[RMDB]
RNA sequence: GGGAACGACUCGAGUAGAGUCGAAAAGUACGAUUUUUCGAAAUCGUACGAAGGUCAGGUGGCAGGACCACGACACUGGUCGCGGCGACCGAGCCGAACAGAAUAUGUGUAAUUUCGAUUACACAAAGAACAUAUGCUCGUUCGCGAGCAUAUGUUCAAAAGAAACAACAACAACAAC
Reactivity to 2A3 in 0.01 (KOAc 150mM, MgCl2 10mM, bicine 150mM(pH8.5), 24C), signal-to-noise 2, nucleotides 027 to 126: g000u010a010c000g030a020u030u020u000u000u200c150g090a010a010a000u000c010g000u000a010c010g000a060a010g030g040u110c050a030g020g060u040g080g030c030a010g010g070a010c040c000a000c030g210a040c030a020c070u040g000g000u030c050g000c050g270g000c000g050a020c000c010g000a000g090c010c020g010a000a020c040a040g240a170a060u190a070u150g000u030g000u000a000a030u040u110u110c200g070a030u010u010a020c030a000c000a010a060a020
Reactivity to DMS in 0.01 (KOAc 150mM, MgCl2 10mM, bicine 150mM(pH8.5), 24C), signal-to-noise 2, nucleotides 027 to 126: g010u000a000c000g000a000u000u000u030u000u010c240g030a020a000a000u000c000g020u000a020c000g010a110a070g010g020u020c040a150g010g010u000g000g040c010a090g000g000a070c010c020a030c080g000a060c250a140c300u000g000g010u010c010g000c060g010g000c010g010a050c000c010g010a250g010c000c000g000a080a200c130a110g040a110a100u010a090u010g000u030g000u000a000a000u000u000u020c190g010a040u000u000a000c000a020c000a070a090a160
The record gives the reactivity of an RNA of 177 nucleotides to 2A3 and DMS. The data come from the RNA Mapping Database (RMDB), library M2PK50.